Chemical mapping of a 177-nucleotide RNA with DMS. The DMS profile rests on 659 reads. The RNA was probed in 150 mM KOAc, 10 mM MgCl2 and 150 mM bicine (pH 8.5) at 24 C. Source: RMDB library OK2TST, as collected in RNAgym.
RNA sequence: GGGAACGACUCGAGUAGAGUCGAAAACAAGGGCUUUAUCUAUAUUAACUCAUUUUAUUUUUCUUUGAAUUAGAAUUAGUUAUUAUCCUCUUUCAACAGGUAAGGAAUAAGGCACAAAGAGGUCACAUGUGAUAGUGAAUUUCGAUUCACUAUCACAAAAAGAAACAACAACAACAAC
Reactivity to DMS in 0.01 (KOAc 150mM, MgCl2 10mM, bicine 150mM(pH8.5), 24C), signal-to-noise 1, nucleotides 027 to 126: c090a180a130g000g010g020c020u010u000u000a030u020c030u000a160u010a050u000u000a010a010c000u000c030a020u000u000u000u000a000u050u010u000u000u020c060u020u010u020g000a080a000u000u010a010g000a040a030u000u000a010g000u000u000a010u000u010a100u000c040c000u000c020u000u000u000c170a020a130c300a010g000g010u010a020a070g020g000a010a050u030a080a050g010g000c020a100c070a040a050a080g000a050g020g000u030c180a050c250a170